This 177-nucleotide RNA was probed chemically with 2A3 and DMS. Reactivities are rounded to 0.1 and cut off at 0 and 3. For 2A3 the reverse transcriptase was SuperScript II with manganese. The reactions ran in a buffer of 150 mM KOAc, 10 mM MgCl2 and 150 mM bicine (pH 8.5), at 24 C.
[RMDB]
RNA sequence: GGGAACGACUCGAGUAGAGUCGAAAAGCUAGAGCGUUGUGGCUGCGAAGCGGUCGCGUAUUAGGCCGGAUAUGCGACGUCAGUUUGAUCCUGACCGGCCUAAGGAUCUUACUGGUGCUCUAGGAAAGGCGUGUUCGCGGUUCGCUGCGGAUAUGCCAAAAGAAACAACAACAACAAC
Reactivity to 2A3 in 0.01 (KOAc 150mM, MgCl2 10mM, bicine 150mM(pH8.5), 24C), signal-to-noise 9, nucleotides 027 to 126: g070c000u000a000g000a000g000c010g020u030u040g050u050g070g000c010u010g020c060g100a100a010g020c010g010g010u010c000g000c000g000u030a040u010u050a030g020g020c010c010g020g000a070u080a030u150g060c050g020a020c020g060u050c000a010g000u010u040u050g010a020u010c000c000u020g030a070c020c010g010g000c000c000u000a010a010g000g000a010u010c000u020u030a020c020u030g020g020u060g010c000u000c000u000a010g020g040a060a070a020
Reactivity to DMS in 0.01 (KOAc 150mM, MgCl2 10mM, bicine 150mM(pH8.5), 24C), signal-to-noise 9, nucleotides 027 to 126: g010c010u000a000g000a010g010c020g020u010u010g010u010g010g020c000u000g010c150g010a150a080g020c020g010g010u000c000g010c010g020u020a040u010u020a040g010g010c010c010g000g000a260u020a030u020g010c050g010a030c060g010u020c010a010g010u000u000u000g000a020u000c010c000u000g000a160c030c020g000g000c000c010u000a050a010g000g000a010u000c010u000u010a010c020u000g000g020u010g000c000u000c000u000a010g000g010a050a090a120